[RMDB]
RNA sequence: GGGAACGACUCGAGUAGAGUCGAAAAGGGGUCGUAACAGGGCGUCUAUGAAGAUCUAGACAUGGUCUGAAGCCUCCACGGACCAACAGCUAGAUUGGAGACGCUAGUUACGACGGAGGCACCCAAACUAGUCGAAGCGUUCGCGCUUCGACUAGAAUCAUACUAGAAAGUUCGCUUUCUAGUAUGAAAAAGAAACAACAACAACAAC
Reactivity to 2A3 in 0.01 (KOAc 150mM, MgCl2 10mM, bicine 150mM(pH8.5), 24C), signal-to-noise 4, nucleotides 027 to 156: g030g010g000g010u010c010g000u000a000a010c020a080g210g110g000c020g000u000c010u050a300u040g000a000a020g000a010u000c000u000a000g040a050c100a240u300g020g000u000c000u010g030a080a010g010c010c000u000c000c000a030c010g000g000a010c030c020a080a050c070a050g090c000u000a000g000a010u010u010g000g010a020g010a020c000g000c010u000a000g000u000u000a010c000g010a000c010g000g000a000g010g000c000a030c010c000c000a030a100a030c010u000a000g000u000c000g000a000a000g000c000g010u070u250c300g030c000g020c130u010u010c000g000a000c000u000a000g000a000a010
Reactivity to DMS in 0.01 (KOAc 150mM, MgCl2 10mM, bicine 150mM(pH8.5), 24C), signal-to-noise 2, nucleotides 027 to 156: g030g020g010g000u000c010g060u000a000a020c020a140g010g040g010c030g000u020c000u000a220u010g030a300a230g010a030u000c010u000a020g030a070c050a250u000g050g000u000c000u010g000a100a270g000c010c000u000c030c010a300c020g000g010a030c000c010a160a080c020a120g000c000u000a000g000a030u000u000g020g000a050g030a040c010g040c010u000a030g010u000u000a020c000g000a050c020g010g030a030g100g010c000a090c020c000c010a100a090a260c000u010a000g040u020c010g040a010a010g030c010g010u010u010c300g020c100g060c000u010u000c000g000a020c000u000a000g000a050a240